[RMDB]
RNA sequence: GGGAACGACUCGAGUAGAGUCGAAAACGCUGGGUUGCGUAGACGUAGUCAGAAUCUAGCGAAGAACGACCUGAAGCGCGCACGGGUCGGGAGCUAGAUUCUGGGAUCGAAGUCUGAUCAACCUGUGCUGAAGCGCGCACGGCAACCGAAAGGUGCGGGAAUCCAAUUUGUUCGCAAAUUGGAUUCCAAAAGAAACAACAACAACAAC
Reactivity to 2A3 in 0.01 (KOAc 150mM, MgCl2 10mM, bicine 150mM(pH8.5), 24C), signal-to-noise 2, nucleotides 027 to 156: c020g000c010u020g020g020g000u010u010g010c010g070u060a010g020a010c040g090u170a050g120u220c000a000g000a000a000u000c010u000a000g010c010g010a060a010g010a000a000c000g000a000c000c000u050g030a250a030g000c000g020c000g000c000a020c030g010g000g000u010c030g000g010g000a010g020c000u000a000g010a020u000u020c000u000g000g000g020a130u300c110g060a130a020g000u000c000u000g000a010u100c000a000a000c000c000u040g010u040g000c000u030g000a070a040g010c000g010c000g000c010a000c020g010g030c020a040a010c000c000g030a070a050a050g010g020u060g010c010g040